[RMDB]
RNA sequence: GGGAACGACUCGAGUAGAGUCGAAAAGCAAGGAGCUUCGGCUCCUUGCAAAAGAAAGCUCCAAAAGGAGCAAUGGACAUGCAAAGAAAAAGUCCAAAUGCAAAAGUCCGUUCUUCGGAACGGACAAGUACAUUUAAUGGUUCGCCAUUAAAUGUACAAAAGAAACAACAACAACAAC
Reactivity to DMS in 0.01 (KOAc 150mM, MgCl2 10mM, bicine 150mM(pH8.5), 24C), signal-to-noise 4, nucleotides 027 to 126: g000c000a000a010g020g010a010g030c010u000u010c250g030g030c000u000c000c000u000u000g010c000a000a040a100a160g020a140a130a160g000c000u000c000c000a110a080a080a220g000g000a020g010c000a050a050u000g020g010a010c000a040u020g020c210a080a100a130g000a040a040a120a100a080g000u000c000c010a040a100a090u030g010c150a080a060a110a100g010u000c000c000g010u000u000c000u000u010c170g010g010a000a010c000g000g000a000c000a010a050
Reactivity to 2A3 in 0.01 (KOAc 150mM, MgCl2 10mM, bicine 150mM(pH8.5), 24C), signal-to-noise 4, nucleotides 027 to 126: g020c010a000a000g000g000a020g010c020u100u140c230g080g010c010u000c000c000u000u010g000c000a000a000a000a000g010a020a060a020g000c010u000c020c010a110a170a070a300g020g000a000g000c000a010a110u050g000g010a010c020a050u150g040c090a130a210a200g110a120a160a070a020a000g010u020c010c000a040a050a030u170g010c030a060a100a030a090g000u000c000c000g010u020u000c010u020u050c210g050g000a000a000c000g000g000a000c000a000a000